[RMDB]
RNA sequence: GGGAACGACUCGAGUAGAGUCGAAAAACUAAUCCAAAGCAAGUAUAGGAGAACAGGUUUUUAACUAUUUUUAGGCAGAUAAAAAAUAGUAUUGGACAGUCUAACACUAACUGAACAAUAAGUGUUAAAAAGUCGUCUCUGUUCGCAGAGACGACAAGAAUUGAUUUGUGUUCGCACAAAUCAAUUCAAAAGAAACAACAACAACAAC
Reactivity to 2A3 in 0.01 (KOAc 150mM, MgCl2 10mM, bicine 150mM(pH8.5), 24C), signal-to-noise 5, nucleotides 027 to 156: a020c060u090a070a020u080c020c010a110a040a030g040c050a070a030g070u130a140u200a210g060g040a080g030a100a050c090a110g070g000u020u020u010u040u080a040a010c010u010a020u000u010u000u000u040a030g050g010c040a030g060a170u160a060a070a000a000a010a020u010a010g020u020a120u050u120g040g050a010c000a000g000u000c000u000a000a000c000a000c000u000a010a000c000u020g090a050a010c010a010a030u030a030a000g000u000g010u010u020a020a090a020a030a010g000u000c000g000u000c000u000c000u000g070u060u060c180g000c060a000g000a000g000a010c000g000a000c000a000a000
Reactivity to DMS in 0.01 (KOAc 150mM, MgCl2 10mM, bicine 150mM(pH8.5), 24C), signal-to-noise 1, nucleotides 027 to 156: a100c110u000a090a120u000c010c000a110a150a250g000c080a140a160g030u000a200u020a110g000g000a050g060a150a140c020a140g020g000u010u000u010u000u010a090a120c010u000a020u000u000u000u010u000a020g000g020c010a050g010a140u010a010a000a020a010a030a000u000a030g020u000a110u010u000g000g020a190c050a090g000u030c040u000a030a020c020a030c000u000a070a140c050u000g010a100a160c110a040a070u020a050a030g020u010g000u000u010a030a000a110a040a080g030u000c000g000u000c000u000c000u000g040u000u000c200g040c000a030g000a030g000a020c000g000a000c000a000a020